[RMDB]
RNA sequence: GGGAACGACUCGAGUAGAGUCGAAAAGCGAGCGCUUCGGCUCCGUCGUCACCCAUAUGGAGGAAUGGUUCGAAGGGGACGCGAACGACUCCGUAGACAAGGCGAUCAACACGGCGAAGGACCACGGGAUCGAGGCGUUCGUGUGGGACCGCGCCGGGAUAGCAGGCUGGUUCGCCAGCCUGCUAUCAAAAGAAACAACAACAACAAC
Reactivity to 2A3 in 0.01 (KOAc 150mM, MgCl2 10mM, bicine 150mM(pH8.5), 24C), signal-to-noise 2, nucleotides 027 to 156: g010c030g000a000g010c070g000c020u030u020c010g010g010c020u000c020c000g000u020c000g000u000c010a190c000c010c020a010u010a030u110g020g020a000g020g040a130a220u140g210g010u030u000c040g030a160a110g110g040g010g000a030c110g020c000g080a000a000c000g060a030c010u000c000c000g010u030a020g010a050c050a030a090g190g020c040g040a060u110c120a080a110c070a040c090g050g050c070g020a120a040g040g000a030c000c010a000c010g010g030g010a040u120c040g020a030g000g050c040g090u010u000c030g010u000g020u070g030g000g020a020c010c020g050c010g010c080c060g080g030